[RMDB]
RNA sequence: GGGAACGACUCGAGUAGAGUCGAAAAGCCAGACAGAAAAUGAGUUAGGGCUGCAAACAGGAUCUGAGUGGCCCCCUGCUCUGGAGAGGCCCCUCCAUGUAAACAGAACGAGUUUCUGGGAAACGUAGUGUAGAUAUGACUUCGGUCAUAUCUACACAAAAGAAACAACAACAACAAC
Reactivity to DMS in 0.01 (KOAc 150mM, MgCl2 10mM, bicine 150mM(pH8.5), 24C), signal-to-noise 2, nucleotides 027 to 126: g020c000c010a060g020a100c040a040g000a060a080a140a130u000g010a050g020u000u020a070g020g010g040c000u010g010c020a060a130a140c080a060g010g010a140u010c060u000g020a100g020u000g000g010c010c040c020c150c040u000g010c130u000c030u010g000g000a120g000a070g040g000c020c010c020c010u000c010c010a080u000g010u000a020a180a200c030a040g010a040a020c100g020a190g030u000u000u010c000u010g010g000g010a080a080a040c080g000u000a070
Reactivity to 2A3 in 0.01 (KOAc 150mM, MgCl2 10mM, bicine 150mM(pH8.5), 24C), signal-to-noise 2, nucleotides 027 to 126: g020c000c000a000g050a020c010a020g120a040a220a040a190u270g020a040g110u050u220a040g000g000g030c020u040g000c040a140a190a080c010a070g190g080a160u130c090u080g040a040g010u050g000g010c000c000c000c000c000u020g020c050u000c020u010g030g010a070g030a010g010g050c000c000c020c010u030c020c010a050u140g060u090a020a040a040c010a010g010a030a010c010g090a010g280u000u010u070c000u010g000g010g030a060a170a020c050g020u080a090
Chemical mapping of a 177-nucleotide RNA with DMS and 2A3. The DMS profile rests on 1,636 reads. The reactions ran in a buffer of 150 mM KOAc, 10 mM MgCl2 and 150 mM bicine (pH 8.5), at 24 C. The data come from the RNA Mapping Database (RMDB), library RFMREP. For 2A3, 1,187 sequencing reads were counted. Values are in units of 0.01, from 0 to 300, in steps of 10.